[RMDB]
RNA sequence: GGGAACGACUCGAGUAGAGUCGAAAAGAAAAUAAGAGCGUAAUCGCGUCUUGACGUGAGUGAGCCCACACGAACAGCUAUCCCAAGUGGGAUAGCAUAGCUAACAAUACGCUAAGAUUCGUGUGAAAGUACCAUAUCGGUUCGCCGAUAUGGUACUAAAAGAAACAACAACAACAAC
Reactivity to DMS in 0.01 (KOAc 150mM, MgCl2 10mM, bicine 150mM(pH8.5), 24C), signal-to-noise 4, nucleotides 027 to 126: g020a080a040a110a050u020a090a060g040a130g000c000g010u010a150a100u040c010g020c020g010u000c060u060u000g020a060c030g010u010g000a050g000u010g010a150g000c010c000c000a030c000a000c010g000a000a010c090a240g010c020u000a000u010c000c000c000a300a150g060u040g000g020g000a010u000a000g020c010a160u000a000g050c030u000a110a090c260a090a210u040a070c210g000c010u000a060a130g000a200u010u010c010g020u000g000u000g000a060a110
Reactivity to 2A3 in 0.01 (KOAc 150mM, MgCl2 10mM, bicine 150mM(pH8.5), 24C), signal-to-noise 5, nucleotides 027 to 126: g030a010a050a000a030u190a060a010g060a010g000c010g060u080a080a040u060c020g000c010g040u020c080u080u190g110a020c000g020u030g000a050g020u060g050a010g010c000c010c000a000c000a000c000g010a000a000c010a010g000c010u010a000u010c020c020c020a220a190g190u300g140g000g000a000u010a000g000c000a000u000a000g000c000u040a050a100c080a190a070u150a110c150g010c010u010a040a030g030a300u000u000c010g000u000g000u000g020a090a110

The record gives the reactivity of an RNA of 177 nucleotides to DMS and 2A3.
The RNA was probed in 150 mM KOAc, 10 mM MgCl2 and 150 mM bicine (pH 8.5) at 24 C.
The 2A3 profile rests on 4,676 reads.
DMS adducts were read by reverse transcription with MarathonRT.
2A3 adducts were read by reverse transcription with SuperScript II with manganese.
Reactivities are rounded to 0.1 and cut off at 0 and 3.